RNA sequence: GGGAACGACUCGAGUAGAGUCGAAAAUGAAUCGAUGGCAAAGCGAUUUGAUGAGUCUGCCAAAGGUAUUGGCGCGACACUCACAGCGGAGCUGGCGACAAUUACCAGCAAUUACCAGCAAAAACAGCAGGCAAUAGACAGCGGCAAACAGCAAGAAAACAUUAACUCCAUUCGUGGAGUUAAUGUUAAAAGAAACAACAACAACAAC
Reactivity to 2A3 in 0.01 (KOAc 150mM, MgCl2 10mM, bicine 150mM(pH8.5), 24C), signal-to-noise 4, nucleotides 027 to 156: u150g030a010a040u030c030g020a020u040g030g070c060a040a000a040g020c020g030a050u040u000u100g130a170u020g020a000g040u010c040u050g000c000c030a030a040a030g140g020u150a110u100u080g020g020c040g000c030g080a030c030a020c090u040c020a050c040a010g040c040g060g040a040g000c040u020g020g010c030g020a040c050a040a040u150u090a060c000c010a030g020c010a010a020u100u050a110c020c030a020g060c050a020a070a050a030a000c010a020g020c020a000g010g050c000a020a030u010a050g060a050c020a020g000c020g060g040c030a030a070a060c050a060g090c050a000a070g060a090a130
Reactivity to DMS in 0.01 (KOAc 150mM, MgCl2 10mM, bicine 150mM(pH8.5), 24C), signal-to-noise 2, nucleotides 027 to 156: u000g030a120a120u000c050g000a100u010g000g020c050a030a180a170g000c010g010a080u010u000u020g030a130u000g010a100g020u010c050u000g020c020c010a080a070a140g050g050u020a110u010u000g020g060c000g010c000g010a170c160a120c020u000c030a070c010a230g000c140g020g010a190g000c020u000g010g000c050g040a050c060a000a140u020u000a120c020c000a070g020c050a120a100u000u000a090c020c010a060g000c130a050a060a080a080a060c120a100g030c030a050g010g030c030a070a040u010a110g010a010c000a050g030c070g010g020c090a040a080a070c020a070g010c030a120a060g010a080a070

Annotation
This 207-nucleotide RNA was probed chemically with 2A3 and DMS. It was measured as part of the RMDB library OK3TST. High 2A3 reactivity points to a flexible backbone, as in loops and unpaired stretches. For DMS the reverse transcriptase was MarathonRT.